The record gives the reactivity of an RNA of 177 nucleotides to DMS and 2A3. Conditions: 150 mM KOAc, 10 mM MgCl2 and 150 mM bicine (pH 8.5), 24 C. For 2A3 the reverse transcriptase was SuperScript II with manganese.
[RMDB]
RNA sequence: GGGAACGACUCGAGUAGAGUCGAAAAGGGUGGUCGCGAGAAACCUUAUUAACCAUGGCAGAACGCGCCCGCGCUGCAUCCAUUCCGGAUGCCACCGAGCGAGUGGCAAAUGAAGUGAGCCGGGUUGACAAGAUCCCGUAUUCGUACGGGAUCUUGUAAAAGAAACAACAACAACAAC
Reactivity to DMS in 0.01 (KOAc 150mM, MgCl2 10mM, bicine 150mM(pH8.5), 24C), signal-to-noise 2, nucleotides 027 to 126: g010g000g080u010g000g020u010c000g010c010g020a100g000a200a200a060c020c010u000u000a130u000u010a130a130c220c100a040u000g010g000c000a100g030a300a220c030g010c000g010c040c010c000g040c040g030c030u000g020c130a090u000c090c000a160u000u010c050c090g000g000a200u000g000c020c070a020c030c050g020a130g010c050g010a070g050u010g010g010c030a030a050a110u000g010a080a070g020u000g000a170g030c030c000g000g010g020u000u000g010
Reactivity to 2A3 in 0.01 (KOAc 150mM, MgCl2 10mM, bicine 150mM(pH8.5), 24C), signal-to-noise 1, nucleotides 027 to 126: g020g000g010u040g000g070u000c020g020c010g000a030g010a010a040a020c030c000u090u080a190u110u120a170a020c080c080a050u080g000g000c040a020g020a170a020c000g030c010g030c010c000c000g040c050g000c060u120g050c010a100u050c040c010a040u230u040c010c030g040g010a020u020g030c000c020a010c000c070g060a190g220c190g050a160g010u040g010g000c010a010a030a260u220g030a110a000g090u040g120a050g030c030c060g060g020g080u060u060g050